[RMDB]
RNA sequence: GGGAACGACUCGAGUAGAGUCGAAAAUCGUCGAACAGGGGUCUUACUCUUGAUGGAUUGCUAUUUAAUUUUAUUACUGACCUGUUCGCAGAGGGUAAGGAUUAAAUAUGGCUAAAUUUAUUAAGAGCAAUUAUUAAUUCUUCGGAAUUAAUAAUUGAAAAGAAACAACAACAACAAC
Reactivity to DMS in 0.01 (KOAc 150mM, MgCl2 10mM, bicine 150mM(pH8.5), 24C), signal-to-noise 2, nucleotides 027 to 126: u020c030g020u020c040g040a050a130c140a050g020g010g020g010u040c070u000u000a300c010u010c000u010u000g010a020u010g010g010a010u000u000g010c010u000a010u000u000u000a010a010u000u000u020u060a050u000u000a010c000u000g020a200c100c000u000g030u000u020c110g010c010a000g000a120g010g020g010u010a010a030g000g010a040u020u010a000a000a020u000a050u030g000g000c000u020a080a020a100u010u010u000a020u010u000a040a010g000a000g010
Reactivity to 2A3 in 0.01 (KOAc 150mM, MgCl2 10mM, bicine 150mM(pH8.5), 24C), signal-to-noise 2, nucleotides 027 to 126: u040c000g060u020c050g050a050a020c050a110g000g000g010g050u000c010u030u050a040c000u000c000u000u000g000a000u000g010g000a000u000u010g010c000u010a000u000u000u000a010a000u000u000u010u090a150u030u000a010c000u000g090a120c010c010u010g000u040u050c140g010c000a010g020a060g010g000g000u000a000a010g000g000a000u010u010a000a010a000u070a020u120g060g000c030u130a060a000a020u010u010u000a010u000u010a000a000g000a000g000